[RMDB]
RNA sequence: GGGAACGACUCGAGUAGAGUCGAAAAUGAGUAUCUGUCUAAAGAAGACCUACAUACAUUGUAUGUAGACCCUAAGUAUCAAGUCAUUGUCUUAAAAGACAAUGUACUUUCUUCUAUGCUUAGAUUGUGACCAAGGUGUUCGCACCUUGGAAAAGAAACAACAACAACAAC
Reactivity to 2A3 in 0.01 (KOAc 150mM, MgCl2 10mM, bicine 150mM(pH8.5), 24C), signal-to-noise 9, nucleotides 027 to 129: u130g010a000g080u080a090u080c080u080g080u000c030u100a130a120a050g130a060a030g020a030c000c000u000a000c010a010u000a000c050a150u130u300g000u010a010u000g000u010a000g030a050c020c000c000u000a020a010g020u020a020u130c090a020a000g000u000c000a000u000u000g010u000c010u100u210a110a120a030a000g000a000c000a000a000u000g010u000a010c000u010u030u020c040u100u000c020u040a050u050g020c010u010u010a020g020a110u100u160g090u090g060a030
Reactivity to DMS in 0.01 (KOAc 150mM, MgCl2 10mM, bicine 150mM(pH8.5), 24C), signal-to-noise 9, nucleotides 027 to 129: u060g000a040g020u030a050u000c060u030g020u030c060u040a060a090a060g030a060a050g010a100c160c010u030a020c040a000u000a010c020a180u040u120g030u000a020u010g000u000a000g040a080c050c060c010u000a010a010g020u000a000u000c190a060a030g000u000c010a020u000u010g020u040c000u010u040a100a110a100a070g000a010c010a040a010u010g010u050a010c020u020u000u060c100u000u000c140u000a070u000g020c000u010u020a010g010a150u010u000g020u000g030a170

Source information: This 170-nucleotide RNA was probed chemically with 2A3 and DMS. The RNA was probed in 150 mM KOAc, 10 mM MgCl2 and 150 mM bicine (pH 8.5) at 24 C. For DMS the reverse transcriptase was MarathonRT. For 2A3, 35,495 sequencing reads were counted.